Notes:
The record gives the reactivity of an RNA of 177 nucleotides to DMS and 2A3. Values cover nucleotides 27 to 126. The RNA was probed in 150 mM KOAc, 10 mM MgCl2 and 150 mM bicine (pH 8.5) at 24 C. It was measured as part of the RMDB library OK1LIB. For DMS the reverse transcriptase was MarathonRT. For DMS, 1,045 sequencing reads were counted.
RNA sequence: GGGAACGACUCGAGUAGAGUCGAAAAGGCUAGCCCCGAAACGGAACAAUGACUUCGCGGCCCCUGCCUCGAGUCGCGCAGCGAGGACGACGAGCUUGUCCAAGAGACGUUCGUUGUCUUCCAGUGCACGUCGAUCCACUUUCGAGUGGAUCGACGUAAAAGAAACAACAACAACAAC
Reactivity to DMS in 0.01 (KOAc 150mM, MgCl2 10mM, bicine 150mM(pH8.5), 24C), signal-to-noise 1, nucleotides 027 to 126: g060g010c030u010a120g000c050c000c030c000g050a000a100a090c060g010g000a050a000c300a300a080u000g000a120c040u010u000c150g000c150g000g020c000c020c000c180u000g020c000c030u000c000g000a000g040u000c000g030c010g000c000a070g100c230g000a000g010g000a020c000g020a000c000g000a070g000c150u060u000g000u000c000c060a170a000g030a100g050a000c080g000u000u010c000g000u000u000g000u000c040u010u000c000c000a240g000u020g000c040
Reactivity to 2A3 in 0.01 (KOAc 150mM, MgCl2 10mM, bicine 150mM(pH8.5), 24C), signal-to-noise 2, nucleotides 027 to 126: g100g000c010u050a000g000c000c000c000c020g110a060a030a010c030g000g120a060a040c080a140a270u240g120a110c000u050u000c070g000c000g060g000c020c000c050c020u090g030c010c000u030c000g000a050g080u000c000g000c000g000c010a040g000c010g100a020g000g000a000c000g010a000c010g010a000g060c030u300u300g000u000c040c000a140a010g090a040g000a000c000g000u030u000c000g020u000u000g000u000c000u000u040c000c000a030g050u040g070c110